Annotation:
Source: RMDB library OK3TST, as collected in RNAgym. Structure probing data (2A3 and DMS) for a 207-nucleotide construct. For 2A3, 5,119 sequencing reads were counted. 2A3 adducts were read by reverse transcription with SuperScript II with manganese.
[RMDB]
RNA sequence: GGGAACGACUCGAGUAGAGUCGAAAAUCACAGGUGGCAUCUCCCUCACUGUUAGUGCUUCUAGCCAGCCGUAUGGAGGCAGACAUCAAUUUCAUGGGUCUAAUUGAGAACUCAUGGUGACCUUGCAGCCAGCAUCUACAGGCCUCUGCUAACAUGCGUUUACAUCCUAAUUCGUUAGGAUGUAAACAAAAGAAACAACAACAACAAC
Reactivity to 2A3 in 0.01 (KOAc 150mM, MgCl2 10mM, bicine 150mM(pH8.5), 24C), signal-to-noise 6, nucleotides 027 to 156: u140c040a030c030a090g030g040u030g030g000c020a080u030c030u040c050c010c000u040c020a060c030u030g020u090u060a050g020u030g090c010u060u060c030u050a040g010c020c010a030g030c030c010g040u060a090u110g040g010a020g020g020c020a010g040a040c030a050u110c050a070a160u100u140u110c030a030u050g020g000g000u000c020u050a160a170u180u190g080a070g020a130a040c010u010c010a020u030g000g040u020g020a040c010c030u010u070g010c010a010g010c030c000a010g020c020a070u070c020u080a030c030a030g010g050c010c000u030c020u040g010c000u020a030a030c030a070u120g010c020
Reactivity to DMS in 0.01 (KOAc 150mM, MgCl2 10mM, bicine 150mM(pH8.5), 24C), signal-to-noise 4, nucleotides 027 to 156: u000c040a070c040a100g000g020u010g010g030c050a080u010c080u010c010c020c010u000c060a120c090u010g000u000u000a060g020u000g020c030u000u010c050u000a140g000c040c060a130g050c060c070g040u000a080u000g010g010a210g020g030c020a070g000a130c090a110u000c070a060a120u000u000u000c040a050u000g020g020g020u000c010u010a090a160u000u010g020a160g020a070a040c020u000c010a040u010g020g000u010g010a020c020c020u000u010g020c040a160g020c050c020a120g020c030a090u000c020u000a070c040a100g000g010c010c010u000c030u000g000c020u000a040a140c060a100u000g010c160